Notes:
The record gives the reactivity of an RNA of 177 nucleotides to 2A3 and DMS. Reactivities are given for positions 27 through 126. For DMS the reverse transcriptase was MarathonRT. The reactions ran in a buffer of 150 mM KOAc, 10 mM MgCl2 and 150 mM bicine (pH 8.5), at 24 C.

RNA sequence: GGGAACGACUCGAGUAGAGUCGAAAAUAUUGGUGUUGGAAUAAGUGGUGAAGAAGGUUUGCAAGCAUCUCUUGCAGCUGAUUAUUCUAUCGCCCAAGUUUAUCAUUUAUUUCUUAUCAUGAUUAUAGUGCUCAUACUAUUUCGAUAGUAUGAGCACAAAAGAAACAACAACAACAAC
Reactivity to 2A3 in 0.01 (KOAc 150mM, MgCl2 10mM, bicine 150mM(pH8.5), 24C), signal-to-noise 1, nucleotides 027 to 126: u190a020u000u020g000g020u090g080u060u140g000g010a000a000u000a000a010g000u020g030g000u000g000a000a000g030a050a010g010g000u140u250u190g000c020a010a040g000c030a210u070c060u000c020u160u010g000c000a020g040c020u110g010a030u000u120a080u170u070c110u070a090u040c010g050c040c010c030a040a040g030u020u040u040a030u040c000a010u010u000u050a040u030u040u040c020u030u090a010u100c000a000u030g070a010u100u210a070u230a210
Reactivity to DMS in 0.01 (KOAc 150mM, MgCl2 10mM, bicine 150mM(pH8.5), 24C), signal-to-noise 2, nucleotides 027 to 126: u000a070u010u000g000g000u000g010u000u000g000g000a010a010u000a010a020g020u010g010g000u010g020a000a040g000a270a200g000g000u010u010u010g030c020a020a020g000c300a170u010c180u020c010u000u010g010c020a040g010c120u000g010a050u000u000a130u010u010c190u000a030u000c100g000c020c020c020a070a180g030u000u000u000a000u010c000a000u000u000u000a020u010u000u010c010u010u010a020u010c020a020u000g000a070u000u020a100u000a110

The DMS profile rests on 1,501 reads.